This 177-nucleotide RNA was probed chemically with DMS and 2A3. For 2A3 the reverse transcriptase was SuperScript II with manganese. The data come from the RNA Mapping Database (RMDB), library TTRDES.
[RMDB]
RNA sequence: GGGAACGACUCGAGUAGAGUCGAAAAAAAAGAUAUGGACUUGUUGUCAGCUUUAAGGGAGAGGUCGUCGGAAACGACGACUACCCACCUCCCGAAGAGCUUGGAUUUACAAGUCCUAAGUCAAAAACAUAAAUGCUUAGUUCGCUAAGCAUUUAUGAAAAGAAACAACAACAACAAC
Reactivity to DMS in 0.01 (KOAc 150mM, MgCl2 10mM, bicine 150mM(pH8.5), 24C), signal-to-noise 5, nucleotides 027 to 126: a050a040a060a070g010a030u000a300u010g010g010a030c010u010u000g000u000u000g010u000c010a050g000c010u010u000u000a050a300g000g000g010a000g030a090g000g010u000c010g010u000c000g010g010a100a110a160c010g000a010c000g000a010c000u000a010c050c080c100a300c190c010u000c000c000c000g000a190a110g010a010g010c010u010u010g030g000a020u000u000u010a020c010a010a010g000u000c000c000u000a020a060g010u010c020a090a100a070a110a150
Reactivity to 2A3 in 0.01 (KOAc 150mM, MgCl2 10mM, bicine 150mM(pH8.5), 24C), signal-to-noise 2, nucleotides 027 to 126: a000a000a000a100g070a030u120a060u120g000g000a000c000u020u000g000u020u040g000u030c010a010g000c010u090u090u040a090a030g010g000g000a000g000a010g000g000u000c010g010u000c000g020g020a060a100a020c010g010a000c000g000a010c000u020a010c020c020c000a030c000c000u010c040c000c000g000a070a010g000a000g010c020u060u120g080g000a030u300u300u160a000c000a010a000g010u020c000c000u010a050a000g020u010c030a040a060a080a030a130